[RMDB]
RNA sequence: GGGAACGACUCGAGUAGAGUCGAAAAAGUAAUAAACAACAAUUGACGAACAAGUAUUGAGUUGAAACGAUCAGCGCCAGUUUCAUACAAUUCCUUGCCAGCGCCCUUAUUAGGCAAUGAAACACGAGCUACUUGGCUAGCAUCAACGUCAACAUCACAGACUUGUACAAUUCGUUGUACAAGUCUGAAAAGAAACAACAACAACAAC
Reactivity to 2A3 in 0.01 (KOAc 150mM, MgCl2 10mM, bicine 150mM(pH8.5), 24C), signal-to-noise 4, nucleotides 027 to 156: a000g140u150a050a100u140a110a120a050c080a040a000c020a050a090u060u090g050a040c050g050a170a070c030a120a030g030u050a090u090u130g050a070g030u010u050g010a050a030a050c040g030a060u080c070a040g050c020g040c140c010a030g000u020u020u030c060a060u070a100c010a040a070u060u070c020c030u020u020g020c030c010a070g030c060g070c070c000c000u090u130a150u130u140a080g000g000c010a010a020u060g040a050a030a020c060a010c100g030a030g000c020u030a020c020u140u150g000g020c030u040a030g010c010a070u060c060a040a030c010g040u040c020a020a020c020a090u120c030a000
Reactivity to DMS in 0.01 (KOAc 150mM, MgCl2 10mM, bicine 150mM(pH8.5), 24C), signal-to-noise 2, nucleotides 027 to 156: a170g000u000a040a080u030a080a130a140c050a110a110c070a050a150u010u010g000a070c050g030a120a050c050a030a090g000u000a060u000u020g010a190g030u000u000g000a040a000a060c040g000a110u000c030a070g030c060g050c030c090a140g000u000u000u100c040a050u020a130c080a080a140u010u000c060c050u010u010g020c050c030a120g020c070g010c010c020c000u000u000a120u000u000a050g020g180c010a120a070u000g000a040a020a070c060a080c090g000a160g040c030u000a010c050u000u000g000g030c020u000a070g030c030a120u000c020a060a100c010g020u000c010a000a000c050a070u020c030a270